[RMDB]
The record gives the reactivity of an RNA of 177 nucleotides to DMS and 2A3. As a SHAPE reagent, 2A3 marks flexible, mostly unpaired nucleotides at the ribose 2'-OH. The RNA was probed in 150 mM KOAc, 10 mM MgCl2 and 150 mM bicine (pH 8.5) at 24 C.
RNA sequence: GGGAACGACUCGAGUAGAGUCGAAAAAUGAAGACAGCAUUCUUUAGAGUCCAGUUUUUGAGAGACGCAUUAUCUUCUUUCUCGAGGAAAGCUUUAUAGCUGGAACCCUCGCCAGGAUUGCAGAGCAGUCCCUAAUUGAGUUCGCUCAAUUAGGGACAAAAGAAACAACAACAACAAC
Reactivity to DMS in 0.01 (KOAc 150mM, MgCl2 10mM, bicine 150mM(pH8.5), 24C), signal-to-noise 2, nucleotides 027 to 126: a040u000g000a040a050g020a060c170a100g000c030a070u020u000c030u000u000u000a090g000a150g010u030c070c080a110g000u000u000u000u000u000g020a090g010a050g010a050c280g000c090a060u000u000a140u000c000u010u000c010u000u000u000c040u000c060g000a040g000g000a080a110a070g020c010u000u000u000a110u000a070g000c010u000g010g010a070a170c100c010c020u000c040g000c120c080a080g010g000a080u000u000g000c060a110g000a140g010c100a120
Reactivity to 2A3 in 0.01 (KOAc 150mM, MgCl2 10mM, bicine 150mM(pH8.5), 24C), signal-to-noise 1, nucleotides 027 to 126: a000u080g010a000a000g050a000c020a000g060c010a090u080u020c040u080u160u060a100g010a010g080u100c020c020a010g000u000u000u040u130u240g090a090g000a000g020a040c040g010c030a080u090u130a040u260c010u000u000c000u060u060u050c030u000c000g000a000g060g010a040a050a000g010c020u120u190u220a280u210a130g040c000u020g020g010a060a080c000c010c000u000c010g060c010c010a070g000g050a120u050u130g040c070a040g000a060g060c030a020